Background: Chemical mapping of a 177-nucleotide RNA with DMS and 2A3. For 2A3 the reverse transcriptase was SuperScript II with manganese. DMS (dimethyl sulfate) methylates the pairing face of unpaired adenines and cytosines. Conditions: 150 mM KOAc, 10 mM MgCl2 and 150 mM bicine (pH 8.5), 24 C. For 2A3, 722 sequencing reads were counted. For DMS, 1,335 sequencing reads were counted. For DMS the reverse transcriptase was MarathonRT. Reactivities are given for positions 27 through 126. It was measured as part of the RMDB library RFM100.
RNA sequence: GGGAACGACUCGAGUAGAGUCGAAAAACUCUUUACUUCUGUGAGUGAGAUUUCCGAUGUCCAAACAGGGUGAUUGUUUCCCUCAAAUGCAUGCCAGAUAAAGUGCCCUUGGGUACAAGAAAGAUGUAAUGGGUUCCAUUUUCGAAUGGAACCCAUUAAAAGAAACAACAACAACAAC
Reactivity to DMS in 0.01 (KOAc 150mM, MgCl2 10mM, bicine 150mM(pH8.5), 24C), signal-to-noise 1, nucleotides 027 to 126: a030c010u000c070u000u000u040a040c040u010u050c150u000g010u070g000a140g000u030g030a020g000a050u000u010u000c040c020g020a090u050g000u070c040c020a100a090a040c100a020g000g000g000u040g020a130u020u000g000u000u000u000c000c030c020u100c140a070a040a070u000g050c030a000u000g000c070c060a000g000a070u000a070a150a130g000u010g000c030c000c000u030u030g040g000g080u000a020c000a090a060g000a120a120a050g000a200u000g000u020
Reactivity to 2A3 in 0.01 (KOAc 150mM, MgCl2 10mM, bicine 150mM(pH8.5), 24C), signal-to-noise 2, nucleotides 027 to 126: a000c050u040c050u010u100u030a010c000u100u160c100u240g040u120g030a040g040u070g000a040g000a050u000u040u000c000c040g000a020u040g070u090c000c070a140a000a000c080a040g000g090g000u080g080a110u000u090g060u000u000u080c000c000c000u000c050a140a160a010u090g000c000a000u140g170c000c000a000g010a040u110a110a140a030g020u030g030c110c000c000u160u240g220g000g000u010a000c020a000a110g060a030a090a000g020a010u130g020u100